[RMDB]
RNA sequence: GGGAACGACUCGAGUAGAGUCGAAAACGUCCCCGUCGUACAGAAUGGUAACAUAUCUCUCCAAAUAUCUGAGCUUGGGUAUACGGGGAAACCCAACCCCUUGGGAAGAUUGGGUAUAAGGCUAAAUUACAUCGAUUGUACUUCGGUACAAUCGAAAGCAAUACUUGUGGUUCGCCACAAGUAUUGCAAAAGAAACAACAACAACAAC
Reactivity to 2A3 in 0.01 (KOAc 150mM, MgCl2 10mM, bicine 150mM(pH8.5), 24C), signal-to-noise 2, nucleotides 027 to 156: c060g100u060c000c000c000c020g040u060c020g030u070a050c010a120g070a050a100u110g020g030u120a060a000c040a130u180a170u010c060u000c000u010c040c030a060a110a090u240a140u100c090u030g030a040g050c020u020u030g010g000g030u050a030u030a060c010g000g000g010g000a000a030a050c010c000c000a010a010c000c010c020c030u000u090g060g010g010a040a010g020a080u030u030g010g020g060u080a070u020a110a020g050g000c050u110a130a060a030u070u080a140c080a110u010c010g020a000u000u000g000u000a000c000u010u050c180g050g000u000a000c000a000a010u000c000g010a010a000a000
Chemical mapping of a 207-nucleotide RNA with 2A3. Reactivities are given for positions 27 through 156. For 2A3 the reverse transcriptase was SuperScript II with manganese. The RNA was probed in 150 mM KOAc, 10 mM MgCl2 and 150 mM bicine (pH 8.5) at 24 C. The 2A3 profile rests on 1,012 reads. Reactivities are rounded to 0.1 and cut off at 0 and 3. The data come from the RNA Mapping Database (RMDB), library M2RFPK.